[RMDB]
RNA sequence: GGGAACGACUCGAGUAGAGUCGAAAAGAAGGUGUGAGUUGCUCCAUUGGCAGCAACAAAGUCGGGAUCAUUAAACAACUCAACAAAGGAUGCACACACAUACCCAAUAAUGAGGCAGACACAAUAAUACGCAAGUAACAUUCGUGUUACUUGCGUAAAAAGAAACAACAACAACAAC
Reactivity to DMS in 0.01 (KOAc 150mM, MgCl2 10mM, bicine 150mM(pH8.5), 24C), signal-to-noise 3, nucleotides 027 to 126: g000a140a110g020g020u010g010u000g000a160g030u000u000g000c020u010c010c070a180u000u000g040g010c160a000g020c020a030a020c050a100a060a080g000u020c080g000g000g000a090u000c060a080u000u000a070a110a090c180a080a060c040u010c020a060a030c110a100a170a070g010g000a060u000g010c010a060c020a030c020a020c050a070u000a120c020c000c040a060a110u010a050a050u000g010a070g000g010c060a020g020a090c090a030c140a020a040u000a070a140
Reactivity to 2A3 in 0.01 (KOAc 150mM, MgCl2 10mM, bicine 150mM(pH8.5), 24C), signal-to-noise 2, nucleotides 027 to 126: g020a080a060g070g020u040g000u040g060a190g000u010u000g030c000u010c020c000a140u090u210g090g020c050a020g000c010a000a040c050a040a130a000g020u020c040g000g000g080a040u070c020a050u050u280a040a050a050c070a080a060c020u000c060a000a070c050a090a170a000g100g030a050u190g040c020a000c000a000c000a000c000a090u070a130c020c020c020a000a030u140a070a070u120g040a040g030g070c050a010g010a040c000a020c020a110a090u190a180a060